[RMDB]
RNA sequence: GGGAACGACUCGAGUAGAGUCGAAAACGCUGGGCUUAUUGGAGCGCGUACUACCCACCCGUACUGAAGCGCGCACGGUACGGAGGUACGCCGCUCAGGAGCCUGUGCUGAAGCGCGCACGGCAACCGAAAGGUGCGAGGGUUCCUCUUCGGAGGAAUACACGGUAACAUUUCGAUGUUACCGUGUAAAAAGAAACAACAACAACAAC
Reactivity to 2A3 in 0.01 (KOAc 150mM, MgCl2 10mM, bicine 150mM(pH8.5), 24C), signal-to-noise 4, nucleotides 027 to 156: c050g000c010u030g000g000g010c000u040u080a080u250u300g290g020a010g000c010g000c000g000u010a000c010u070a080c020c030c040a010c010c000c000g000u000a000c000u040g040a300a050g000c000g000c000g020c000a010c000g010g000u000a000c010g000g010a020g000g000u020a000c010g060c100c100g000c010u020c070a090g120g030a000g010c000c000u060g070u080g010c030u170g050a130a020g010c010g020c000g010c000a000c020g060g000c020a110a140c000c010g060a120a050a040g000g010u020g010c010g020a120g060g050g020u020u030c010c000u010c000u020u060c240g080g000a000g010g000a000a000
Reactivity to DMS in 0.01 (KOAc 150mM, MgCl2 10mM, bicine 150mM(pH8.5), 24C), signal-to-noise 2, nucleotides 027 to 156: c080g040c050u010g000g040g050c020u000u000a130u010u000g030g000a040g010c010g030c020g040u000a030c020u000a050c010c020c010a300c060c000c020g010u000a030c000u000g010a090a120g030c120g000c000g020c030a240c010g000g000u000a010c000g030g020a180g010g000u010a020c030g000c020c020g060c000u000c000a070g000g020a120g000c000c000u000g010u000g010c010u010g010a060a080g030c010g040c040g050c000a240c020g020g040c030a150a110c040c030g000a050a100a110g010g030u000g000c010g000a110g000g010g000u000u000c000c000u000c000u000u010c190g000g000a050g020g010a020a160